[RMDB]
RNA sequence: GGGAACGACUCGAGUAGAGUCGAAAAGGGUGAGACCUAGGAACCGUAGGGGUAUUCUCAAAGGACGCUUUUGCAGUGACGCCCAUGUAAGUGGGAUAUAACAACAGAACUCGUAUGAGUAGCCUAAUAAAUCGGACCUUCUUCGGAAGGUCCGAAAUCUUAGUGUGUCGUUCGCGACACACUAAGAAAAAGAAACAACAACAACAAC
Reactivity to DMS in 0.01 (KOAc 150mM, MgCl2 10mM, bicine 150mM(pH8.5), 24C), signal-to-noise 1, nucleotides 027 to 156: g020g020g040u000g000a140g010a070c010c020u010a110g000g010a070a050c040c050g090u010a040g020g000g010g010u000a050u000u000c000u000c000a080a110a120g030g020a060c070g020c070u000u000u000u000g000c000a160g010u000g010a160c120g000c010c000c000a060u000g010u010a050a170g040u020g000g010g000a070u010a010u000a110a080c020a110a140c040a090g020a120a020c000u000c010g000u000a170u000g010a110g010u010a070g010c050c020u010a070a090u010a060a090a150u010c020g010g000a040c000c010u000u000c000u040u000c300g020g020a040a000g040g000u010c010c000g000a010a010a020
Reactivity to 2A3 in 0.01 (KOAc 150mM, MgCl2 10mM, bicine 150mM(pH8.5), 24C), signal-to-noise 2, nucleotides 027 to 156: g020g010g010u080g040a080g000a030c040c070u060a040g020g080a040a050c110c030g040u050a010g000g030g010g000u050a060u110u030c070u020c060a030a090a040g030g010a010c010g000c040u070u030u050u060g000c020a040g000u010g050a020c040g040c010c000c000a020u070g110u190a090a170g010u010g000g000g000a020u040a000u040a100a010c050a000a020c010a010g040a060a020c030u040c060g080u150a060u210g010a010g070u060a020g000c000c000u060a100a030u150a130a130a020u060c000g000g000a010c000c000u000u030c000u010u010c030g080g000a000a000g020g000u000c000c000g000a000a000a000
Annotation
Conditions: 150 mM KOAc, 10 mM MgCl2 and 150 mM bicine (pH 8.5), 24 C. This 207-nucleotide RNA was probed chemically with DMS and 2A3. It was measured as part of the RMDB library M2RFPK. The DMS profile rests on 2,209 reads.